This 177-nucleotide RNA was probed chemically with DMS and 2A3. For 2A3, 800 sequencing reads were counted. It was measured as part of the RMDB library OK1LIB.
RNA sequence: GGGAACGACUCGAGUAGAGUCGAAAAGAUUCAGAACAUGAAGGAAGAAAUGGCUCGUCACCUUCGGGAGUACCAGGACCUGCUGAAUGUUAAGAUGGCUCUCGACAUUGAGAUUGCCACCUACAGGCAAACUGUUGCGGUUCGCCGCAACAGUUUGAAAAGAAACAACAACAACAAC
Reactivity to DMS in 0.01 (KOAc 150mM, MgCl2 10mM, bicine 150mM(pH8.5), 24C), signal-to-noise 2, nucleotides 027 to 126: g000a060u010u000c060a090g070a090a090c180a050u010g040a060a050g000g030a120a160g060a030a070a070u000g000g040c060u000c100g080u000c070a060c070c020u000u020c060g020g000g040a070g010u000a060c090c000a180g020g040a190c000c040u000g040c000u060g000a040a070u030g000u000u000a060a100g010a050u000g000g050c050u000c000u050c020g000a140c230a130u050u040g000a060g000a040u020u030g020c000c010a070c040c030u000a130c180a040g010g000
Reactivity to 2A3 in 0.01 (KOAc 150mM, MgCl2 10mM, bicine 150mM(pH8.5), 24C), signal-to-noise 2, nucleotides 027 to 126: g070a000u180u170c030a040g120a240a120c150a160u240g090a090a140g050g050a020a060g020a070a090a110u020g040g000c000u000c100g020u050c000a070c030c000u000u000c000g000g000g000a080g000u070a150c020c010a000g040g070a050c000c000u000g000c010u050g070a020a010u130g080u080u010a060a070g030a060u030g010g000c000u020c000u020c000g160a140c040a150u230u300g000a000g020a020u070u140g000c000c000a010c020c000u030a020c000a050g070g000
High 2A3 reactivity points to a flexible backbone, as in loops and unpaired stretches. Values cover nucleotides 27 to 126.